[RMDB]
An RNA of 177 nucleotides, treated with DMS and 2A3 and read out base by base. Reactivities are given for positions 27 through 126. The reactions ran in a buffer of 150 mM KOAc, 10 mM MgCl2 and 150 mM bicine (pH 8.5), at 24 C. Source: RMDB library OK2TRN, as collected in RNAgym.
RNA sequence: GGGAACGACUCGAGUAGAGUCGAAAAGGUCAUUAAGUUCAGCUUAUUGUGGGUCUUGAGUUGUAUUAGACUCUGUAACAUUAUGGAAAAUUACACAGUUGGCCACUAGAUGGUUGUACUUGAUGCGUAAAGUCCAUACGUUCGCGUAUGGACUUUAAAAAGAAACAACAACAACAAC
Reactivity to DMS in 0.01 (KOAc 150mM, MgCl2 10mM, bicine 150mM(pH8.5), 24C), signal-to-noise 3, nucleotides 027 to 126: g000g020u010c010a030u000u000a000a020g000u010u000c010a010g010c010u010u020a130u010u000g000u000g020g020g010u000c020u000u000g000a120g010u010u000g010u000a110u010u000a110g000a130c060u010c020u010g010u000a010a100c180a130u000u020a130u010g020g000a030a040a080a060u000u010a020c010a030c140a150g000u010u010g020g000c000c010a020c030u010a110g010a100u000g010g020u000u000g010u000a010c010u000u000g010a000u000g010c030g010
Reactivity to 2A3 in 0.01 (KOAc 150mM, MgCl2 10mM, bicine 150mM(pH8.5), 24C), signal-to-noise 2, nucleotides 027 to 126: g050g000u170c000a010u030u000a000a000g000u030u010c000a000g000c010u030u240a030u050u110g020u140g070g010g070u000c010u060u090g060a060g020u080u050g040u100a140u070u080a080g050a050c000u020c040u040g000u000a080a080c050a150u200u030a060u150g140g010a060a010a030a060u050u050a020c040a000c020a090g160u150u090g010g010c000c000a030c040u040a040g040a240u190g050g000u020u000g020u020a000c020u010u010g010a000u000g000c000g020